The record gives the reactivity of an RNA of 177 nucleotides to 2A3. Conditions: 150 mM KOAc, 10 mM MgCl2 and 150 mM bicine (pH 8.5), 24 C. Reactivities are given for positions 27 through 126.

[RMDB]
RNA sequence: GGGAACGACUCGAGUAGAGUCGAAAAGUGGCAAGAGAAUGGCACUCUUAGAAAUCUUAUUCCAUUCAACUUUCAAAAUAACAUGCAAAACGUGCAAUAUUGAUGACCUCGAAUUAUCAGAUGAUGACUUGUGGUGGCCAUUCGUGGCCACCACAAGAAAAGAAACAACAACAACAAC
Reactivity to 2A3 in 0.01 (KOAc 150mM, MgCl2 10mM, bicine 150mM(pH8.5), 24C), signal-to-noise 1, nucleotides 027 to 126: g000u010g030g050c020a060a050g040a000g000a160a290u000g100g000c000a000c030u170c000u020u050a000g180a150a100a030u150c000u000u120a100u000u300c000c000a030u000u000c000a040a150c100u080u000u030c000a000a100a000a000u080a110a090c130a000u070g000c240a110a100a000a000c050g110u050g000c000a010a010u000a000u010u130g200a180u250g080a080c040c040u060c000g000a000a000u060u080a050u200c120a150g070a030u080g050a050u030g000a020